An RNA of 177 nucleotides, treated with DMS and 2A3 and read out base by base.
For DMS, 1,167 sequencing reads were counted.
The RNA was probed in 150 mM KOAc, 10 mM MgCl2 and 150 mM bicine (pH 8.5) at 24 C.
RNA sequence: GGGAACGACUCGAGUAGAGUCGAAAAUGAAAGACUAGGAAACUCGAAUAAAUAAGUGGUAAUCCUAGCGAAUCCACGGCGAGGAAACUAGGACACUAACCAUGUGAUCCCGGACGCUAGAUAAAAACAUAAGUACCACGUUCGCGUGGUACUUAUGAAAAGAAACAACAACAACAAC
Reactivity to DMS in 0.01 (KOAc 150mM, MgCl2 10mM, bicine 150mM(pH8.5), 24C), signal-to-noise 2, nucleotides 027 to 126: u020g000a110a100a130g010a130c030u000a060g000g010a040a170a100c040u000c000g010a070a150u030a070a120a080u000a050a070g030u000g010g000u000a110a170u010c080c020u010a000g020c010g030a240a140u000c010c000a050c050g010g000c030g010a070g010g000a120a080a100c010u000a020g000g000a100c060a070c090u000a090a110c210c180a070u000g000u000g010a070u000c000c020c010g000g010a100c070g010c010u010a010g000a250u000a050a030a030a040a090
Reactivity to 2A3 in 0.01 (KOAc 150mM, MgCl2 10mM, bicine 150mM(pH8.5), 24C), signal-to-noise 1, nucleotides 027 to 126: u100g040a040a030a010g050a020c010u020a020g090g020a160a080a030c000u030c020g040a100a000u120a250a120a000u170a240a050g010u010g000g030u010a030a060u010c000c000u000a020g000c040g000a020a020u000c010c000a050c010g060g040c070g040a020g000g030a060a040a140c010u010a010g010g000a020c010a000c050u030a050a040c050c040a030u130g040u000g030a140u040c000c000c020g040g010a030c040g000c030u020a000g040a180u190a060a080a000a000a000